[RMDB]
RNA sequence: GGGAACGACUCGAGUAGAGUCGAAAACCUUCAUUAGCUCCUCCUAAGACUAUGGCCACCACGCGUCCCUUGUUGUCGAAGAUCGGUCUGCCGCUGUCCACUGGUUUGCCAGCACCUGUAAGGGUUCGCCCUUACAAAAGAAACAACAACAACAAC
Reactivity to 2A3 in 0.01 (KOAc 150mM, MgCl2 10mM, bicine 150mM(pH8.5), 24C), signal-to-noise 2, nucleotides 027 to 135: c050c000u230u280c300a300u280u300a100g010c020u020c020c010u100c020c010u110a260a080g080a190c040u090a090u060g000g010c000c030a030c050c010a080c100g170c040g220u170c030c030c040u030u090g100u060u080g060u080c080g090a120a050g100a180u100c050g040g130u080c040u070g030c020c050g110c070u080g030u010c000c020a050c050u020g010g030u060u010u050g020c000c000a000g020c020a020c010c010u000g020u000a000a000g030g000g000u010u030c110g090c000c000c000u020u010a010c020a060
Structure probing data (2A3) for a 155-nucleotide construct.
It was measured as part of the RMDB library P90LIB.
Reactivities are given for positions 27 through 135.